[RMDB]
RNA sequence: GGGAACGACUCGAGUAGAGUCGAAAAGGCAGAUCAGCAGGGCGGUGAGCACGAUGGGGUCGAUGGGCCUAUACAUUGGUCUACUCCUUUGACAGGCCACCCGGCGACACGAUGUCACCGUGAUAGCAGCCCGGGAGUACCCCAUUCUUCACAUAGGACGAAAGGUUAGAUUCGUCUAACCUUUCGUAAAAGAAACAACAACAACAAC
Reactivity to 2A3 in 0.01 (KOAc 150mM, MgCl2 10mM, bicine 150mM(pH8.5), 24C), signal-to-noise 3, nucleotides 027 to 156: g070g000c000a000g010a140u100c050a030g030c020a040g040g000g000c060g030g000u010g030a010g010c070a020c120g020a010u010g010g000g020g020u040c040g040a070u160g090g010g000c000c000u030a030u030a080c060a030u010u110g000g020u050c060u090a040c050u100c010c050u050u040u060g050a080c030a020g000g000c000c000a030c000c010c000g000g000c010g010a010c000a010c090g080a090u290g030u110c000a030c080c000g010u030g080a130u070a070g090c080a020g010c010c020c000g000g000g000a010g010u120a030c000c040c000c000a010u190u030c020u050u020c000a020c030a100u160a080g000g140
Reactivity to DMS in 0.01 (KOAc 150mM, MgCl2 10mM, bicine 150mM(pH8.5), 24C), signal-to-noise 2, nucleotides 027 to 156: g010g040c070a080g010a060u000c030a070g050c040a070g010g010g000c050g020g040u000g010a070g000c060a050c130g020a060u000g000g030g070g020u000c060g020a200u000g000g020g000c000c010u010a180u000a090c090a100u000u040g020g050u000c040u000a110c050u010c020c040u000u000u000g000a060c010a050g000g000c020c010a110c000c010c050g000g040c000g010a090c020a110c050g020a170u000g010u010c020a050c010c030g040u000g020a110u000a050g030c050a170g030c030c000c050g010g010g010a090g000u000a020c020c020c010c020a080u000u000c040u000u000c050a070c110a100u010a140g000g010

Chemical mapping of a 207-nucleotide RNA with 2A3 and DMS. Reactivities are given for positions 27 through 156. For 2A3 the reverse transcriptase was SuperScript II with manganese.